An RNA of 177 nucleotides, treated with 2A3 and DMS and read out base by base. For DMS, 903 sequencing reads were counted. The RNA was probed in 150 mM KOAc, 10 mM MgCl2 and 150 mM bicine (pH 8.5) at 24 C.

RNA sequence: GGGAACGACUCGAGUAGAGUCGAAAAGAUAUGGACCAGGACAUGCUUGGAUGUCGGAAACGACAUAGAGAGCAACAGCCUGAGUCCUAAGUCAAAACCCUUCCUAUUGUUCGCAAUAGGAAGGGAAGUUCGGACACUUGUUCGCAAGUGUCCGAACAAAAGAAACAACAACAACAAC
Reactivity to 2A3 in 0.01 (KOAc 150mM, MgCl2 10mM, bicine 150mM(pH8.5), 24C), signal-to-noise 2, nucleotides 027 to 126: g050a010u060a060u150g030g000a010c000c000a040g000g030a080c060a200u110g020c010u050u000g190g100a020u030g020u000c000g000g040a060a070a060c010g020a000c020a000u070a020g300a010g010a010g050c020a020a110c080a110g060c000c000u000g120a090g020u040c000c000u030a100a060g020u000c000a020a020a140a260c000c000c000u000u010c000c000u020a020u000u010g030u000u050c290g020c150a000a000u000a010g010g000a020a000g010g010g020a020a000
Reactivity to DMS in 0.01 (KOAc 150mM, MgCl2 10mM, bicine 150mM(pH8.5), 24C), signal-to-noise 1, nucleotides 027 to 126: g020a020u000a300u030g010g000a040c020c000a020g050g000a040c110a250u000g010c000u000u050g010g020a080u000g000u000c000g000g010a110a050a170c030g010a000c000a010u000a050g010a230g010a050g000c000a020a080c210a130g000c010c000u000g000a100g020u010c000c010u000a030a100g000u000c010a060a080a210a080c010c020c000u000u000c000c000u020a030u000u000g000u000u030c180g090c020a000a010u000a040g000g000a030a000g000g000g000a000a000